[RMDB]
RNA sequence: GGGAACGACUCGAGUAGAGUCGAAAAUUCCCAGAAAACAAAAGGACCGCCCAACAGGGGCGGGGCGAACGAUUGCAAAAGCUUCGUUGUGCCCCAUGGCCAUACGGACAGCCGGGUCCACUGCCGACGACUACUUGGACUUCGGUCCAGGUAGUCGAAAAGAAACAACAACAACAAC
Reactivity to 2A3 in 0.01 (KOAc 150mM, MgCl2 10mM, bicine 150mM(pH8.5), 24C), signal-to-noise 9, nucleotides 027 to 126: u010u000c000c000c000a000g110a020a140a010a020c110a020a120a020a010g010g000a000c000c000g020c000c000c000a150a180c140a190g010g010g010g010c010g000g000g000g000c000g010a000a000c000g040a050u070u170g020c030a190a210a160a170g010c010u000u000c000g020u000u010g140u120g080c010c000c000c000a020u290g000g000c010c000a030u060a070c010g010g020a010c000a010g000c000c000g010g000g000u000c000c000a000c000u030g000c000c000g020a050
Reactivity to DMS in 0.01 (KOAc 150mM, MgCl2 10mM, bicine 150mM(pH8.5), 24C), signal-to-noise 5, nucleotides 027 to 126: u010u000c000c010c000a180g000a090a050a130a110c180a080a080a130a100g000g000a010c000c000g020c000c000c000a180a160c270a120g010g010g010g010c020g000g020g000g030c010g020a020a010c010g010a010u020u010g000c010a180a100a100a130g000c000u010u000c000g010u000u000g000u020g000c010c000c010c000a080u030g000g000c000c010a050u000a120c010g000g000a010c010a110g000c020c000g030g010g010u010c000c000a130c090u040g000c020c000g000a300